[RMDB]
RNA sequence: GGGAACGACUCGAGUAGAGUCGAAAACGGAAGCAUUAAAACCACUCGAGCUAGUCAAUGCGUGGCGUGUCUCUCCGCAGCGUGUUGGCGAAUGUAAAGAGUGACUAAGCAUGUAGUACCGAGGAUGAUAAGAGCAAUUCGUUCGCGAAUUGCUCAACUAUUCAUCCUACUUCGGUAGGAUGAAUAGAAAAGAAACAACAACAACAAC
Reactivity to DMS in 0.01 (KOAc 150mM, MgCl2 10mM, bicine 150mM(pH8.5), 24C), signal-to-noise 4, nucleotides 027 to 156: c050g020g020a300a180g010c050a050u000u000a050a060a140a150c070c030a080c020u000c020g000a300g020c030u010a160g010u000c030a010a030u000g000c000g050u010g020g050c010g010u010g010u010c110u000c040u010c260c010g020c010a070g020c000g040u000g030u000u000g020g030c010g020a070a070u000g020u000a060a100a170g000a030g010u000g010a110c060u000a090a140g010c120a050u000g010u000a120g000u030a090c030c020g000a140g000g020a130u000g000a110u010a100a140g000a020g050c010a010a010u000u000c010g020u000u000c300g020c030g010a020a030u000u000g000c000u000c010a000a050
Reactivity to 2A3 in 0.01 (KOAc 150mM, MgCl2 10mM, bicine 150mM(pH8.5), 24C), signal-to-noise 8, nucleotides 027 to 156: c040g030g040a100a050g020c020a030u040u100a050a020a020a070c030c000a010c000u010c010g030a030g020c010u050a030g010u000c000a000a010u000g010c010g010u030g070g000c020g020u110g110u050c050u030c020u020c140c000g010c000a000g010c000g000u010g010u010u010g010g000c010g010a040a030u090g010u040a070a150a030g010a000g000u010g010a000c010u030a030a030g080c030a040u060g030u070a050g050u050a120c030c030g020a040g120g020a050u160g020a030u100a220a120g000a000g030c000a000a000u000u000c000g040u060u100c260g000c010g090a000a000u000u000g000c000u000c000a000a000
Chemical mapping of a 207-nucleotide RNA with DMS and 2A3.
DMS adducts were read by reverse transcription with MarathonRT.
For 2A3, 11,629 sequencing reads were counted.